Structure probing data (2A3 and DMS) for a 177-nucleotide construct. It was measured as part of the RMDB library M2PK90. For 2A3 the reverse transcriptase was SuperScript II with manganese. The RNA was probed in 150 mM KOAc, 10 mM MgCl2 and 150 mM bicine (pH 8.5) at 24 C. For DMS the reverse transcriptase was MarathonRT. Reactivities are given for positions 27 through 126.

RNA sequence: GGGAACGACUCGAGUAGAGUCGAAAAAAGAAUGGGGGACUGGCUGCCCUCAUGAGAACAAACCCAUGACUAGCGUCGAAACAUCAACAGUGGGGGCUGUUGGUGUCGGCAGCCACUAGUCAAAGAAGUACAGAAUUAACUUCGGUUAAUUCUGUACAAAAGAAACAACAACAACAAC
Reactivity to 2A3 in 0.01 (KOAc 150mM, MgCl2 10mM, bicine 150mM(pH8.5), 24C), signal-to-noise 3, nucleotides 027 to 126: a000a020g160a030a010u010g000g000g000g000g000a000c010u060g090g010c040u050g010c010c000c010u000c000a010u040g030a040g050a050a030c050a080a060a040c010c010c030a060u080g010a010c010u010a010g050c000g050u020c030g060a160a110a020c000a010u010c000a000a000c000a000g000u190g050g020g000g020g020c000u000g000u010u000g000g000u010g010u010c010g010g020c000a000g010c000c010a010c000u000a000g000u010c000a010a060a040g090a130a010
Reactivity to DMS in 0.01 (KOAc 150mM, MgCl2 10mM, bicine 150mM(pH8.5), 24C), signal-to-noise 3, nucleotides 027 to 126: a040a060g010a180a030u000g000g010g000g020g000a080c050u010g020g020c060u010g000c010c000c010u000c010a020u000g010a140g030a110a110c150a030a090a080c010c000c000a150u020g010a030c010u000a030g000c140g000u000c020g020a200a090a020c010a000u000c000a000a010c010a000g020u000g000g000g000g010g020c010u000g020u000u000g020g030u000g000u000c030g010g010c040a010g030c030c030a300c010u010a010g010u010c000a110a050a120g000a080a130